Source: RMDB library RNAMAK, as collected in RNAgym. An RNA of 207 nucleotides, treated with DMS and read out base by base. Conditions: 150 mM KOAc, 10 mM MgCl2 and 150 mM bicine (pH 8.5), 24 C.

RNA sequence: GGGAACGACUCGAGUAGAGUCGAAAAGGGGUCGAUGGCGAGCUCGCUAACAGCUUGGAUUUAUACACUGAAGCCUCCACGGUGUAUUGUCAGCUGGAACCGAGCUCGCCAUCGACGGAGGCACCCAAAUCGAGCGUUCGUUCGCGAACGCUCGAAAGUUAUGUAUACAGUUCGCUGUAUACAUAACAAAAGAAACAACAACAACAAC
Reactivity to DMS in 0.01 (KOAc 150mM, MgCl2 10mM, bicine 150mM(pH8.5), 24C), signal-to-noise 1, nucleotides 027 to 156: g030g000g040g010u000c010g020a020u000g000g000c010g020a030g010c000u000c000g040c010u000a120a300c020a000g000c010u000u020g020g010a030u000u010u000a050u000a010c000a020c010u000g010a050a130g050c030c000u000c010c050a300c030g010g020u010g030u010a020u000u010g000u000c030a030g000c000u010g020g000a130a170c210c020g000a030g010c000u000c010g000c010c010a010u000c000g010a010c000g030g020a040g040g020c050a180c010c000c010a020a070a160u000c010g000a070g010c020g040u010u000c000g010u000u010c300g040c070g030a010a010c000g000c000u010c020g000a010a010a140
In probing experiments dimethyl sulfate is read out at A N1 and C N3, which are open when not base-paired.